[RMDB]
RNA sequence: GGGAACGACUCGAGUAGAGUCGAAAAAGAGAAGUUUCUCUGAUCGUGUAGAGCACCGAAAACCACGAGGAGGAGGCGCAGUGUUCUCUCCUGAGCGUGAAGCCGGCUCUUGGUGUCGCUUUGCUGCCCGAUGCAAUUACUUCGGUAAUUGCAUCGGAAAAGAAACAACAACAACAAC
Reactivity to DMS in 0.01 (KOAc 150mM, MgCl2 10mM, bicine 150mM(pH8.5), 24C), signal-to-noise 1, nucleotides 027 to 126: a080g010a020g020a120a190g000u000u010u000c010u000c000u010g010a240u000c090g000u000g020u030a120g000a060g010c010a150c080c080g000a030a050a110a150c090c010a100c050g000a030g010g010a090g020g000a030g000g000c110g010c080a100g010u000g000u020u000c010u000c070u010c040c040u000g000a020g020c020g040u000g020a100a160g030c040c030g030g000c050u000c040u000u010g000g020u020g000u010c100g000c010u000u000u000g020c050u010g010c110